[RMDB]
RNA sequence: GGGAACGACUCGAGUAGAGUCGAAAACAUCUCUUCGUCUAGUGAGGGAUUCGUGCUGCGUUGGCCUCAUUAUUAUUCGCUUUACGGACGAGCGAGUAACAUCACGGCACGAGGGGAAUCAGGUGGCUCUCGGAGUACGUUUCGACGUGCUCUGGGGAAAAGAAACAACAACAACAAC
Reactivity to 2A3 in 0.01 (KOAc 150mM, MgCl2 10mM, bicine 150mM(pH8.5), 24C), signal-to-noise 9, nucleotides 027 to 126: c030a060u020c010u010c000u080u050c030g070u020c060u070a060g030u030g080a040g010g000g010a010u020u040c020g000u020g020c020u020g010c010g040u030u050g040g040c000c010u050c050a040u010u110a030u020u010a010u020u000c000g000c000u010u010u080a070c060g060g040a020c030g000a010g000c000g000a000g000u000a020a020c010a040u050c020a000c000g010g000c010a000c010g000a010g000g010g000g010a020a070u070c000a030g020g030u020g030g000c010
Reactivity to DMS in 0.01 (KOAc 150mM, MgCl2 10mM, bicine 150mM(pH8.5), 24C), signal-to-noise 9, nucleotides 027 to 126: c120a080u010c020u000c010u010u010c030g010u010c090u020a070g010u020g000a050g000g000g000a120u020u010c020g010u000g010c010u010g000c050g010u000u010g010g010c060c050u020c090a070u030u020a130u010u010a000u000u000c000g000c000u000u000u020a130c090g000g010a040c090g000a010g000c000g000a010g010u000a010a040c110a050u010c060a070c050g000g000c030a030c020g010a050g000g010g000g010a110a080u020c100a080g000g010u010g000g010c080